[RMDB]
RNA sequence: GGGAACGACUCGAGUAGAGUCGAAAAUAUAUCUAACACAAUGUCUAAUGAUCUUAAAUGUAUAAUGAUGGAGCGCGAAAUGGAAGCAAAAAUAAAUCGCAUAAUUAUACGUAAGGUAAUCUACGCAUGCGACUUUAUGCGCGAUUACGCGAUUACAACCUCUGAUCGUAUUCGUACGAUCAGAGGUAAAAGAAACAACAACAACAAC
Reactivity to 2A3 in 0.01 (KOAc 150mM, MgCl2 10mM, bicine 150mM(pH8.5), 24C), signal-to-noise 3, nucleotides 027 to 156: u080a000u010a030u030c020u070a220a020c000a000c020a160a100u100g060u020c060u170a120a070u080g050a060u010c040u070u160a130a120a080u060g080u030a080u010a070a060u030g050a040u060g060g050a080g060c080g000c020g070a040a040a060u080g040g040a050a080g030c090a070a080a020a020a000u170a000a050a020u030c000g000c030a010u000a110a020u130u090a050u010a080c030g080u030a040a030g060g000u000a000a010u000c020u050a040c010g000c000a000u050g040c040g050a070c050u130u160u060a050u020g010c000g000c000g000a000u020u010a010c040g000c020g060a020u020u040a020c000a010
Reactivity to DMS in 0.01 (KOAc 150mM, MgCl2 10mM, bicine 150mM(pH8.5), 24C), signal-to-noise 2, nucleotides 027 to 156: u000a100u000a040u010c030u000a120a100c050a070c050a110a100u000g020u000c050u010a080a120u010g010a080u010c070u000u000a030a080a070u000g030u020a070u000a040a080u000g000a110u010g040g000a110g040c050g010c040g010a070a090a090u010g010g020a060a090g010c090a010a060a030a110a060u000a050a100a030u000c010g050c000a070u000a050a100u020u000a110u000a010c010g000u000a040a040g020g000u000a010a090u010c040u000a030c030g060c020a000u000g030c060g010a080c010u010u020u010a040u010g000c000g000c110g040a010u000u000a010c030g000c000g030a060u000u000a120c110a090